[RMDB]
RNA sequence: GGGAACGACUCGAGUAGAGUCGAAAAGCGUGAAUGGUUCACGCAGAUGGCGAAGCACUAUGACCCGAAGCUGUACGGCGCGCGCGUCAAUAUCGAACACCUGAAGGGCUGGGCGCCGCUGUCGUCCACCAACCCGUUCGGUUCAUACGGCGACGUGAAAGUAUACGCGUUUCGACGCGUAUACUUUAAAAGAAACAACAACAACAAC
Reactivity to 2A3 in 0.01 (KOAc 150mM, MgCl2 10mM, bicine 150mM(pH8.5), 24C), signal-to-noise 1, nucleotides 027 to 156: g000c030g000u090g000a100a220u300g210g170u180u000c000a000c000g000c000a010g080a070u170g020g000c000g020a030a000g030c050a020c230u070a010u080g020a040c010c000c000g030a030a000g080c120u030g030u090a000c000g000g000c000g020c000g010c000g010c000g050u000c060a070a070u110a140u300c110g040a010a100c090a030c060c070u110g100a100a120g090g000g000c090u010g050g000g000c000g000c010c040g060c000u010g010u030c020g000u000c010c000a040c010c030a100a130c020c020c050g010u030u010c010g000g020u000u020c010a030u000a020c190g000g000c010g020a100c000g000u000g080